RNA sequence: GGGAACGACUCGAGUAGAGUCGAAAAAAUAGACAGGUCUGAGUGCCUGAACUUGCCUUUUCAUUUUACUUCAUCCUCCAAGGAGUUCAAUCACUUGGCGUGACUUCACUACUUUUAAGCAAAAGAGCGCUAUUUACGGUUUCGACCGUAAAUAGCGAAAAGAAACAACAACAACAAC
Reactivity to DMS in 0.01 (KOAc 150mM, MgCl2 10mM, bicine 150mM(pH8.5), 24C), signal-to-noise 1, nucleotides 027 to 126: a110a000u030a010g010a210c050a020g000g010u000c000u050g000a210g000u000g000c070c030u020g000a060a090c060u000u000g030c000c010u020u020u000u000c030a090u070u000u020u000a000c010u000u010c090a120u010c020c010u000c050c040a100a050g010g000a070g050u050u000c190a030a070u030c080a100c030u010u080g010g030c060g000u000g010a040c040u050u000c080a050c040u000a030c100u010u010u000u010a020a170g070c150a010a000a060a020g000a130g000
Reactivity to 2A3 in 0.01 (KOAc 150mM, MgCl2 10mM, bicine 150mM(pH8.5), 24C), signal-to-noise 3, nucleotides 027 to 126: a000a020u150a000g050a040c010a020g010g010u050c080u290g200a050g100u210g000c010c000u000g020a020a020c030u040u030g070c000c000u080u000u060u090c070a110u050u080u040u070a070c040u020u050c030a100u040c000c030u060c010c020a040a000g000g000a030g050u000u110c050a050a110u060c000a010c070u040u010g000g000c000g060u070g030a000c010u080u120c070a000c030u070a070c060u000u070u090u090a080a050g070c050a030a040a020a000g040a020g000